[RMDB]
RNA sequence: GGGAACGACUCGAGUAGAGUCGAAAAAUCAGCCUUCGUUCUGUAAACGGGGUUGGAUCCGACUCUCAUAGGCUCUCCAACCCAACUCCUACUCAAUACGUCCUCGUCGUACAGAACGGUCACAUGUAAAACGAAGGCUGCUUCGGCAGCCUUCGAACCCUAAGGAUAGGUUCGCCUAUCCUUAGGGAAAAGAAACAACAACAACAAC
Reactivity to 2A3 in 0.01 (KOAc 150mM, MgCl2 10mM, bicine 150mM(pH8.5), 24C), signal-to-noise 3, nucleotides 027 to 156: a010u050c050a020g060c020c000u060u070c020g000u020u000c000u020g020u050a060a120a050c040g000g000g000g000u010u010g000g000a060u260c000c010g060a060c060u060c010u020c150a190u130a190g000g010c010u010c000u000c000c010a060a010c040c010c000a000a020c010u040c000c000u070a070c040u050c090a080a180u070a160c060g130u100c010c040u050c050g060u030c020g000u010a010c000a010g000a010a020c000g010g000u100c070a070c030a110u190g060u260a030a070a130a010c010g000a000a000g000g000c000u000g000c020u000u020c000g110g000c000a010g010c000c000u000u000c000g000a000a000
Reactivity to DMS in 0.01 (KOAc 150mM, MgCl2 10mM, bicine 150mM(pH8.5), 24C), signal-to-noise 1, nucleotides 027 to 156: a130u000c030a070g010c040c040u000u020c000g030u010u010c020u010g010u000a080a090a020c070g020g010g000g030u000u000g000g010a040u000c000c010g020a130c010u000c050u000c180a160u000a150g000g040c000u000c120u020c040c000a080a100c010c000c000a040a040c050u010c000c020u030a080c020u000c100a020a160u010a140c100g040u000c080c020u000c030g000u010c040g040u000a020c060a020g000a030a030c000g020g010u010c100a080c010a150u000g000u000a030a070a080a140c030g040a060a020g000g090c010u000g030c030u000u000c160g040g020c040a020g000c000c010u000u000c010g000a010a020

Source: RMDB library M2RFPK, as collected in RNAgym. The record gives the reactivity of an RNA of 207 nucleotides to 2A3 and DMS. The RNA was probed in 150 mM KOAc, 10 mM MgCl2 and 150 mM bicine (pH 8.5) at 24 C.